[RMDB]
RNA sequence: GGGAACGACUCGAGUAGAGUCGAAAAUGAGCUUCUGUGGGCAGGAAAGGCAACUUUUAUUUAGGACCAGAUUCAGCACUUCCCCUUCCAGGAUGGAAGGGGUCUGAUGUGAUCAGCUUGUCACCCAUGUUGCGUUUUGUUUCGACAAAACGCAACAAAAAGAAACAACAACAACAAC
Reactivity to DMS in 0.01 (KOAc 150mM, MgCl2 10mM, bicine 150mM(pH8.5), 24C), signal-to-noise 1, nucleotides 027 to 126: u000g030a070g010c030u000u000c070u010g070u000g000g010g000c040a120g000g000a030a060a080g030g000c180a110a070c060u000u000u000u020a080u040u030u000a130g000g000a050c050c010a070g000a100u000u000c020a030g020c300a060c140u000u000c000c000c040c020u000u000c000c000a240g010g030a130u010g020g000a020a010g060g000g000g010u000c010u010g010a040u000g010u000g000a080u000c070a080g000c030u010u000g020u000c070a190c010c030c050a090